This 207-nucleotide RNA was probed chemically with DMS and 2A3. 2A3 adducts were read by reverse transcription with SuperScript II with manganese.
[RMDB]
RNA sequence: GGGAACGACUCGAGUAGAGUCGAAAACUACAAGGGGAGGUUUCGGCCAAAUGUUGUAUGCAGAAAGCGUGAGGAAGGUAGCACUUAGACACUCACGAGUAGCGGUUCGGCAGUAGUGCUAAAAUGAGACAGUACGAAAAGUUCGCUUUUCGUACAAGACUAUUCUGUCGUUCGCGACAGAAUAGUCAAAAGAAACAACAACAACAAC
Reactivity to DMS in 0.01 (KOAc 150mM, MgCl2 10mM, bicine 150mM(pH8.5), 24C), signal-to-noise 2, nucleotides 027 to 156: c030u000a090c030a020a130g010g010g030g020a150g010g020u010u000u000c030g040g030c050c000a020a060a080u020g020u000u010g010u000a100u000g000c040a170g020a080a080a130g020c040g010u000g000a070g020g030a060a070g000g000u010a060g020c040a030c030u000u000a090g030a120c020a050c050u000c030a080c030g020a090g000u010a070g070c060g010g020u000u010c060g020g060c060a100g010u010a060g010u010g010c030u010a010a040a060a060u000g040a270g020a100c060a140g040u000a010c000g000a010a040a010a020g010u020u030c300g040c020u000u010u020u000c010g010u000a000c020a060a150
Reactivity to 2A3 in 0.01 (KOAc 150mM, MgCl2 10mM, bicine 150mM(pH8.5), 24C), signal-to-noise 2, nucleotides 027 to 156: c030u130a050c060a080a040g010g030g000g000a020g000g040u060u030u090c050g020g000c020c010a000a060a070u140g020u100u070g050u080a050u080g030c010a020g060a160a040a000g050c020g000u030g010a020g010g010a070a020g040g010u050a020g000c010a000c040u040u020a020g020a070c030a040c080u030c020a020c050g010a010g030u050a010g050c040g000g070u070u030c000g020g030c010a040g040u130a000g000u030g040c030u050a030a050a050a140u140g010a030g010a060c040a060g000u000a010c000g000a000a000a000a000g000u010u040c090g060c110u000u000u000u000c000g000u000a000c000a000a000
The RNA was probed in 150 mM KOAc, 10 mM MgCl2 and 150 mM bicine (pH 8.5) at 24 C. 2A3 is a SHAPE reagent: it acylates the 2'-hydroxyl of flexible nucleotides of all four kinds. The DMS profile rests on 2,543 reads. Reactivities are given for positions 27 through 156. Source: RMDB library M2RFPK, as collected in RNAgym.